RNA sequence: GGGAACGACUCGAGUAGAGUCGAAAAACGAUAACGAGGCGCUCGUUAUUGCUGCGUAACUGACGGCCUGACGGUCUGACGUUACAAAGCUAAAGCGCGGUUGGACCCCACCGGGCAACAGAAGGGGAAAGGCGACCCCGUUUCGACGGGGUCGCAAGUGUAUGGACUGAUUCGUCAGUCCAUACACAAAAGAAACAACAACAACAAC
Reactivity to 2A3 in 0.01 (KOAc 150mM, MgCl2 10mM, bicine 150mM(pH8.5), 24C), signal-to-noise 2, nucleotides 027 to 156: a010c000g000a030u030a000a000c000g010a060g300g120c180g090c150u020c010g010u010u010a050u050u050g020c010u010g010c010g010u000a000a010c000u010g030a000c010g000g010c000c010u220g170a130c150g030g010u020c020u020g030a000c010g000u020u020a000c010a020a040a020g000c010u020a080a020a080g100c090g010c020g000g000u050u120g140g050a080c030c010c000c000a000c000c020g040g200g000c020a060a010c000a020g020a070a010g030g000g000g020a110a020a040g110g030c000g000a010c010c000c040c030g000u100u020u040c080g060a000c030g000g050g000g020u000c000g000c000a000a000
Structure probing data (2A3) for a 207-nucleotide construct. 2A3 adducts were read by reverse transcription with SuperScript II with manganese. The RNA was probed in 150 mM KOAc, 10 mM MgCl2 and 150 mM bicine (pH 8.5) at 24 C.